This 177-nucleotide RNA was probed chemically with 2A3. Source: RMDB library OK1LIB, as collected in RNAgym. Values cover nucleotides 27 to 126. 2A3 is a SHAPE reagent: it acylates the 2'-hydroxyl of flexible nucleotides of all four kinds. The RNA was probed in 150 mM KOAc, 10 mM MgCl2 and 150 mM bicine (pH 8.5) at 24 C.
RNA sequence: GGGAACGACUCGAGUAGAGUCGAAAACUUCUCUGCCCCAUAGAAAGGCCUGAUAAAAGUUUCUUACAAUAGAACCCAAAAGUUGAUGCUUUUAUGGGGAUUAGGAUCCUUCUGGUGUCUGCAGGAGCGUUGGUCUGACUUUCGAGUCAGACCAACGAAAAGAAACAACAACAACAAC
Reactivity to 2A3 in 0.01 (KOAc 150mM, MgCl2 10mM, bicine 150mM(pH8.5), 24C), signal-to-noise 1, nucleotides 027 to 126: c000u060u120c010u070c000u010g060c010c000c000c000a000u010a080g070a000a110a000g000g020c000c080u100g060a030u010a040a140a000a000g000u150u210u010c090u020u000a040c200a300a180u140a060g070a100a050c000c140c050a040a060a060a060g040u140u100g070a300u300g070c010u000u070u000u020a040u070g000g000g000g000a000u000u040a030g010g010a030u010c020c000u030u020c060u080g010g000u040g010u040c090u080g030c020a000g030g000a060g000